An RNA of 177 nucleotides, treated with 2A3 and read out base by base. The RNA was probed in 150 mM KOAc, 10 mM MgCl2 and 150 mM bicine (pH 8.5) at 24 C.
RNA sequence: GGGAACGACUCGAGUAGAGUCGAAAACACUACGUGAACAGAACGGUUGCGCUCCGGGUACAAUACCAGAGGUUAAUAGAAGUGAAAGUUCAGUAAGUGCACCGCGACCGUUCUGUACACAUAGUGACGUGAUGUCGACCUUCGGGUCGACAUCACGAAAAGAAACAACAACAACAAC
Reactivity to 2A3 in 0.01 (KOAc 150mM, MgCl2 10mM, bicine 150mM(pH8.5), 24C), signal-to-noise 1, nucleotides 027 to 126: c000a030c020u030a020c090g000u000g000a020a000c000a000g020a000a010c020g000g000u010u010g000c000g000c000u000c000c000g200g000g000u230a170c230a110a250u100a300c020c000a000g100a130g000g000u240u150a060a000u030a300g050a050a000g000u000g020a300a180a110g080u260u030c050a000g040u300a210a000g050u010g050c020a000c060c000g000c000g000a000c000c000g000u000u000c000u000g030u000a000c000a000c000a140u110a050g000u000g000a000